[RMDB]
RNA sequence: GGGAACGACUCGAGUAGAGUCGAAAACAACAUCACCACCGUUUAUUUUUCGUUGAUUUUCAACUUCGGUGGUUGUGUCGCAAUCCACAACAAACAAGGUAUCAAAUAGUGGGAAAAUGGGUGGGAAUAUCCAAUCAUCUUUCGAGAUGAUUGGAUAAAAAGAAACAACAACAACAAC
Reactivity to 2A3 in 0.01 (KOAc 150mM, MgCl2 10mM, bicine 150mM(pH8.5), 24C), signal-to-noise 9, nucleotides 027 to 126: c030a020a000c000a010u040c020a000c000c000a000c000c010g030u010u110u100a290u050u140u050u110u180c050g010u010u030g040a160u080u080u180u270c020a020a010c000u030u010c010g000g010u010g000g000u000u010g010u000g010u020c030g010c060a030a060u070c030c020a100c050a130a100c060a070a210a020c060a070a060g090g010u150a080u230c040a020a040a100u150a130g010u030g000g010g020a050a060a060a130u070g010g020g020u190g020g010g020a030a050
Reactivity to DMS in 0.01 (KOAc 150mM, MgCl2 10mM, bicine 150mM(pH8.5), 24C), signal-to-noise 5, nucleotides 027 to 126: c160a090a040c030a010u020c230a050c000c000a010c010c000g000u000u040u040a080u040u010u010u020u040c190g010u000u000g000a120u030u040u010u010c010a020a070c090u010u010c020g010g030u000g000g000u000u010g000u000g000u000c060g020c170a110a070u020c020c020a080c120a070a040c210a060a100a110c240a120a070g000g010u010a060u010c110a220a090a080u030a090g000u010g010g010g010a040a010a020a040u020g000g000g000u010g000g030g000a070a060